RNA sequence: GGGAACGACUCGAGUAGAGUCGAAAAAUUGGCCAAUUGCUGCAUGGUCCGCUGGCCGAUAGUUAUGGUCGCCGUCCGGUGAUGCUGUGCGGUAUCUUCCUCUUUGGUAUUGCUGCUAUGGUGAGCAGAUCAGUCACGACUUCGGUCGUGACUGAUCAAAAGAAACAACAACAACAAC
Reactivity to 2A3 in 0.01 (KOAc 150mM, MgCl2 10mM, bicine 150mM(pH8.5), 24C), signal-to-noise 1, nucleotides 027 to 126: a000u100u220g070g000c000c000a030a050u130u040g080c060u010g000c020a090u060g000g000u040c020c020g010c020u010g000g000c000c020g010a060u030a060g170u240u040a190u200g170g020u000c020g010c050c010g040u140c000c050g040g000u010g050a050u120g000c030u000g030u000g030c000g010g000u090a070u040c050u120u070c000c010u020c000u030u030u050g020g000u050a080u090u130g040c010u020g000c030u060a040u170g120g000u090g060a010g000c020a030
Reactivity to DMS in 0.01 (KOAc 150mM, MgCl2 10mM, bicine 150mM(pH8.5), 24C), signal-to-noise 1, nucleotides 027 to 126: a040u000u010g060g010c030c010a070a030u010u000g020c040u000g070c030a060u000g000g030u010c180c040g010c020u000g000g000c060c000g030a070u000a070g010u000u000a090u010g010g000u000c050g010c090c060g000u020c070c040g000g010u000g010a090u000g000c020u000g040u000g000c070g010g000u000a090u010c110u000u000c010c030u000c090u000u010u000g010g000u000a100u000u000g010c030u000g000c010u000a070u000g000g020u010g010a050g040c070a070